[RMDB]
RNA sequence: GGGAACGACUCGAGUAGAGUCGAAAAGAGAGUGGUGCUGUAGAAGGCAUUAACCUUCCUUUCUCAUCAGAGGAUAGUAAGAGUAUAGUUAAUGAAAUUGGUUUUGAUAGAGAUUUGAAAUCUCAAGGAAUCUUACUAAAUUCGUUUAGUAAGAUUCAAAAGAAACAACAACAACAAC
Reactivity to 2A3 in 0.01 (KOAc 150mM, MgCl2 10mM, bicine 150mM(pH8.5), 24C), signal-to-noise 5, nucleotides 027 to 126: g060a000g010a010g000u030g010g040u020g010c020u030g000u080a030g020a180a060g050g000c010a020u020u060a070a030c010c000u030u010c010c000u010u050u000c030u000c020a150u070c040a030g040a030g080g020a040u050a090g050u070a080a030g030a010g080u080a050u110a160g040u050u090a090a040u120g060a060a050a100u090u060g050g020u010u070u060u040g050a090u110a120g020a010g010a020u020u060u070g100a210a180a010u010c010u010c030a000a010g090
Reactivity to DMS in 0.01 (KOAc 150mM, MgCl2 10mM, bicine 150mM(pH8.5), 24C), signal-to-noise 7, nucleotides 027 to 126: g010a050g010a080g020u000g000g010u000g010c020u000g010u010a160g010a160a190g000g000c020a030u000u000a070a060c040c010u000u000c020c020u000u000u000c010u000c070a100u010c150a080g020a070g010g000a050u000a040g010u000a040a070g010a110g010u000a060u010a080g010u010u000a040a070u010g010a040a080a100u010u010g010g010u000u000u000u000g010a120u010a110g000a030g000a020u000u000u000g000a080a100a110u000c010u000c020a100a120g010
Notes:
Structure probing data (2A3 and DMS) for a 177-nucleotide construct. For 2A3 the reverse transcriptase was SuperScript II with manganese.